Overview:
Chemical mapping of a 177-nucleotide RNA with 2A3 and DMS. It was measured as part of the RMDB library TTRDEL. Values are in units of 0.01, from 0 to 300, in steps of 10. As a SHAPE reagent, 2A3 marks flexible, mostly unpaired nucleotides at the ribose 2'-OH. The RNA was probed in 150 mM KOAc, 10 mM MgCl2 and 150 mM bicine (pH 8.5) at 24 C. Reactivities are given for positions 27 through 126. For DMS the reverse transcriptase was MarathonRT. For 2A3 the reverse transcriptase was SuperScript II with manganese.
RNA sequence: GGGAACGACUCGAGUAGAGUCGAAAAGAUAUGGAAAUUUCAGGAAUCUGGCGAAGAACUCGGAAACGAGGGAGCCAGUGGCCUGAGAAUUUCCUAAGUCAAAGAACGCUGGUUCGCCAGCGUUCAACUGAUAUAAAGGGUUCGCCCUUUAUAUCAGAAAAGAAACAACAACAACAAC
Reactivity to 2A3 in 0.01 (KOAc 150mM, MgCl2 10mM, bicine 150mM(pH8.5), 24C), signal-to-noise 3, nucleotides 027 to 126: g020a020u060a060u160g000g010a020a010a000u020u020u010c000a000g000g020a060a090u050c010u010g000g030c010g180a300a050g020a080a090c000u000c010g000g020a070a040a030c020g000a010g000g030g000a000g010c000c010a000g000u000g010g100c020c000u020g020a050g080a010a030u020u000u010c000c000u030a150a020g050u030c050a160a050a190g000a000a010c000g000c010u000g070g050u070u110c260g080c090c010a000g000c000g000u000u000c000a010a010
Reactivity to DMS in 0.01 (KOAc 150mM, MgCl2 10mM, bicine 150mM(pH8.5), 24C), signal-to-noise 4, nucleotides 027 to 126: g010a040u000a300u010g010g010a000a010a020u000u000u000c000a010g000g000a160a070u000c010u010g010g010c000g000a090a140g000a110a260c000u000c000g000g000a140a080a150c010g010a020g000g000g010a110g010c000c000a010g020u000g000g010c010c000u010g010a030g010a030a020u000u000u000c000c000u000a050a120g000u000c020a080a120a170g000a010a020c000g010c000u000g000g000u000u010c240g030c010c000a000g010c000g010u000u000c000a040a090